[RMDB]
This 177-nucleotide RNA was probed chemically with DMS and 2A3. 2A3 adducts were read by reverse transcription with SuperScript II with manganese. The reactions ran in a buffer of 150 mM KOAc, 10 mM MgCl2 and 150 mM bicine (pH 8.5), at 24 C. The data come from the RNA Mapping Database (RMDB), library M2PK50. Reactivities are rounded to 0.1 and cut off at 0 and 3. For DMS, 1,300 sequencing reads were counted.
RNA sequence: GGGAACGACUCGAGUAGAGUCGAAAACGACUGCGUUUCGACGCAGUCGAACAUUAUGUGGUGAAAUAUAAAAGCCGAAAUUCCGAUACCAUAUAAUUUAAUUUACCUACGAGUUCGCUCGUAGGAACGUACACUGUGAGUUCGCUCACAGUGUACGAAAAGAAACAACAACAACAAC
Reactivity to DMS in 0.01 (KOAc 150mM, MgCl2 10mM, bicine 150mM(pH8.5), 24C), signal-to-noise 2, nucleotides 027 to 126: c010g000a000c000u010g010c010g010u000u000u000c160g020a040c040g060c000a020g020u000c000g020a100a150c060a080u020u000a020u000g010u000g000g000u000g010a060a220a060u010a090u010a060a060a080a090g010c050c050g000a080a130a240u020u010c020c020g000a050u010a020c020c000a000u000a000u000a020a010u000u000u010a070a150u000u000u000a110c000c000u000a000c010g010a030g010u000u020c190g010c000u000c000g020u000a010g010g000a050a020
Reactivity to 2A3 in 0.01 (KOAc 150mM, MgCl2 10mM, bicine 150mM(pH8.5), 24C), signal-to-noise 4, nucleotides 027 to 126: c030g020a000c000u000g010c010g010u000u020u100c190g030a010c010g030c000a010g010u000c000g020a000a010c000a020u030u030a010u020g010u040g030g020u040g080a040a200a000u230a030u050a140a210a040a000g060c080c050g050a090a070a060u170u040c030c020g040a040u050a090c000c020a010u020a010u040a040a030u030u120u170a160a250u090u180u180a150c000c000u010a010c010g000a000g020u050u080c170g080c080u000c000g000u000a010g000g000a000a000